[RMDB]
RNA sequence: GGGAACGACUCGAGUAGAGUCGAAAAGAAGGAAGUUCUGAGCGAAAUCAGGUGGCCGCAUAUAUUGCGAGCCAGAUAGGGCAGAACGCGCAGUCCGUGCAGACCACGGCAGAGUCGCAUUUGCGUUAUUAUACAUGUUCUUCGGAACAUGUAUAAUAAAAGAAACAACAACAACAAC
Reactivity to 2A3 in 0.01 (KOAc 150mM, MgCl2 10mM, bicine 150mM(pH8.5), 24C), signal-to-noise 6, nucleotides 027 to 126: g120a020a040g120g050a100a040g000u040u000c020u020g040a030g100c050g070a080a070a130u060c020a040g150g080u020g040g020c020c000g000c070a010u200a020u050a050u130u140g020c020g010a040g010c010c010a000g020a030u060a010g060g050g000c010a000g010a050a020c020g000c000g010c030a010g030u040c010c010g010u010g010c020a040g040a180c070c000a010c000g010g000c020a020g020a020g160u170c020g000c050a040u070u040u160g030c020g020u020u010
Reactivity to DMS in 0.01 (KOAc 150mM, MgCl2 10mM, bicine 150mM(pH8.5), 24C), signal-to-noise 7, nucleotides 027 to 126: g000a110a090g000g010a110a110g020u000u000c010u010g010a090g020c050g000a090a130a080u000c050a120g010g030u000g010g020c020c010g000c010a020u000a130u010a140u010u000g010c000g010a110g010c000c010a020g010a070u000a090g010g010g020c020a030g000a040a030c070g010c050g020c050a120g010u010c020c010g020u000g000c120a170g010a140c220c010a020c040g010g000c050a140g000a090g010u000c030g010c020a130u000u010u010g010c090g020u010u000